[RMDB]
RNA sequence: GGGAACGACUCGAGUAGAGUCGAAAACUUUUCGCGCAUUUCGUGUAAUAAAUGGUUCCUUUCCUGCGGCGCCACUACGAAAAUCGUGAUUAUGCUGUGCCAAAUUAUUACCUGUUGGCUGUGCGACUAAUUUAUGCUCGUUCGCGAGCAUAAAUUAAAAAGAAACAACAACAACAAC
Reactivity to DMS in 0.01 (KOAc 150mM, MgCl2 10mM, bicine 150mM(pH8.5), 24C), signal-to-noise 3, nucleotides 027 to 126: c070u000u010u030u010c040g000c000g030c120a060u000u000u010c060g020u000g000u000a080a040u030a050a070a170u020g020g010u010u000c020c020u010u020u010c050c010u010g010c060g000g000c040g000c070c020a040c040u000a050c070g010a030a020a070a090u000c050g000u020g000a090u010u000a040u030g010c010u020g020u030g000c030c020a030a030a090u010u010a120u040u000a070c070c090u020g010u010u010g010g010c060u010g010u010g010c030g000a160c220
Reactivity to 2A3 in 0.01 (KOAc 150mM, MgCl2 10mM, bicine 150mM(pH8.5), 24C), signal-to-noise 5, nucleotides 027 to 126: c000u050u080u070u050c040g010c000g000c050a040u030u030u100c100g010u080g040u120a110a070u080a100a230a070u130g050g000u040u080c010c000u040u100u090c020c020u070g020c040g010g000c020g040c000c020a040c030u120a020c030g050a060a030a060a150u110c050g040u030g020a060u080u070a110u140g060c040u030g010u030g030c010c000a080a040a070u140u130a080u070u090a100c030c050u030g010u040u010g050g000c040u030g020u050g040c020g010a010c040